Overview: Chemical mapping of a 177-nucleotide RNA with 2A3 and DMS. The data come from the RNA Mapping Database (RMDB), library OK2TRN. Reactivities are given for positions 27 through 126. The DMS profile rests on 22,293 reads.
[RMDB]
RNA sequence: GGGAACGACUCGAGUAGAGUCGAAAAGUCGCCGCAUCUACAUCAACGCCCAGCGCGGGCGAGGGAGGCGUCCUACGGGGGUGACCCAUUCGCCGGCAUGGUAGAGGACUGCAAGAUUGCCGCGACGGCCGUAUAAUAUAUUCGUAUAUUAUACGGCAAAAGAAACAACAACAACAAC
Reactivity to 2A3 in 0.01 (KOAc 150mM, MgCl2 10mM, bicine 150mM(pH8.5), 24C), signal-to-noise 9, nucleotides 027 to 126: g010u000c000g000c010c010g000c010a000u000c010u040a030c010a050u050c020a070a050c040g030c010c000c020a060g050c300g030c150g190g020g000c020g000a010g040g030g010a300g030g020c020g030u010c000c010u040a150c170g250g010g000g000g030u060g120a240c000c000c010a040u040u040c010g000c000c000g070g030c030a040u050g010g010u050a060g020a050g090g030a040c110u060g000c030a030a030g000a050u060u250g010c010c010g000c010g000a010c000g020
Reactivity to DMS in 0.01 (KOAc 150mM, MgCl2 10mM, bicine 150mM(pH8.5), 24C), signal-to-noise 9, nucleotides 027 to 126: g020u000c010g040c000c290g010c020a040u000c010u000a150c050a080u000c030a070a120c060g010c090c000c020a070g010c150g040c070g000g010g020c000g000a020g000g010g000a110g010g000c040g000u000c000c010u000a110c190g030g010g010g000g000u010g000a150c020c000c010a180u010u000c030g010c010c000g010g020c020a070u010g000g010u000a090g010a120g000g000a050c120u000g010c030a050a040g000a030u000u010g050c000c240g010c010g010a020c070g010